Annotation:
Source: RMDB library OK3TST, as collected in RNAgym. An RNA of 207 nucleotides, treated with 2A3 and DMS and read out base by base.

RNA sequence: GGGAACGACUCGAGUAGAGUCGAAAAAAAUAUCAACUGCCUUAUAUGUUCAUGAAAGGGCUAGGCAAGUGAAGGGCUGUAAUUUGAUCUUUUGUAUGUUAGCAUCAGAAUGUUACAUAGGAAGGCUCUGCUGGAAGGCCCAGUUUUGGACAUCACACGUAUUAGCCAUAUUCGUAUGGCUAAUACGAAAAGAAACAACAACAACAAC
Reactivity to 2A3 in 0.01 (KOAc 150mM, MgCl2 10mM, bicine 150mM(pH8.5), 24C), signal-to-noise 3, nucleotides 027 to 156: a000a000a000u210a020u080c060a030a110c030u060g020c020c000u200u090a180u030a040u290g010u010u000c040a030u070g150a030a110a160g030g000g000c020u010a010g080g000c040a110a040g060u120g100a070a080g000g040g010c020u050g070u180a080a130u080u120u160g130a120u050c050u040u120u030u130g110u120a100u020g160u130u200a030g000c060a020u060c020a010g180a300a050u070g000u040u000a020c000a010u030a020g050g030a030a040g020g010c020u040c040u060g020c010u020g000g070a120a050g010g010c000c000c000a000g010u060u060u020u060g000g010a010c000a000u050c040a040c000a040
Reactivity to DMS in 0.01 (KOAc 150mM, MgCl2 10mM, bicine 150mM(pH8.5), 24C), signal-to-noise 2, nucleotides 027 to 156: a040a030a070u010a080u010c010a050a050c050u010g030c000c000u010u000a140u010a050u010g030u010u010c050a070u010g020a070a110a130g000g010g030c010u010a060g000g020c020a060a120g050u000g000a110a080g010g020g010c020u010g000u000a080a100u000u010u000g020a100u010c020u010u000u000u000g000u000a010u000g000u000u010a020g020c030a050u010c040a300g000a070a200u010g000u000u000a020c000a020u000a040g000g000a060a050g010g000c040u020c070u000g000c010u000g010g000a120a130g020g000c010c010c020a110g020u000u000u000u000g000g010a050c030a070u000c100a090c100a150
DMS adducts were read by reverse transcription with MarathonRT. Reactivities are given for positions 27 through 156. Conditions: 150 mM KOAc, 10 mM MgCl2 and 150 mM bicine (pH 8.5), 24 C.